Structure probing data (2A3 and DMS) for a 177-nucleotide construct. For DMS the reverse transcriptase was MarathonRT. It was measured as part of the RMDB library OK1LIB. For 2A3, 1,873 sequencing reads were counted.

[RMDB]
RNA sequence: GGGAACGACUCGAGUAGAGUCGAAAAGCGAUGUGAUGUCGGGACGCUGGCCAGGAUCACCGAAUGCGCGGACGCGGGUUCGGGUCGCUAUAUGCUGCGCUGCCGGGUGGGCGAACGGAUCCGGGUGCUCCAUGCCUAUCUUCGGAUAGGCAUGGAGAAAAGAAACAACAACAACAAC
Reactivity to 2A3 in 0.01 (KOAc 150mM, MgCl2 10mM, bicine 150mM(pH8.5), 24C), signal-to-noise 2, nucleotides 027 to 126: g050c050g060a060u070g080u090g050a050u110g030u090c050g020g000g030a010c030g000c020u040g010g000c020c000a050g060g000a040u050c050a040c050c000g040a060a020u130g080c030g000c000g020g080a060c130g020c030g000g060g000u050u010c010g060g030g000u030c020g000c060u050a040u020a030u300g020c010u020g000c020g000c010u020g030c040c000g000g030g000u090g030g000g000c020g020a080a000c010g000g010a020u020c010c010g030g000g010u070g000
Reactivity to DMS in 0.01 (KOAc 150mM, MgCl2 10mM, bicine 150mM(pH8.5), 24C), signal-to-noise 2, nucleotides 027 to 126: g000c010g020a060u000g000u030g000a040u020g040u030c030g000g030g000a090c050g000c020u000g000g000c030c110a080g000g030a030u000c030a290c000c010g010a050a060u010g020c030g020c010g020g050a130c130g000c020g000g020g000u000u010c030g020g000g010u000c110g000c040u020a050u050a070u100g000c050u000g010c100g000c020u030g000c210c020g040g000g020u030g000g000g000c080g000a030a050c130g000g000a040u000c020c000g000g000g020u010g020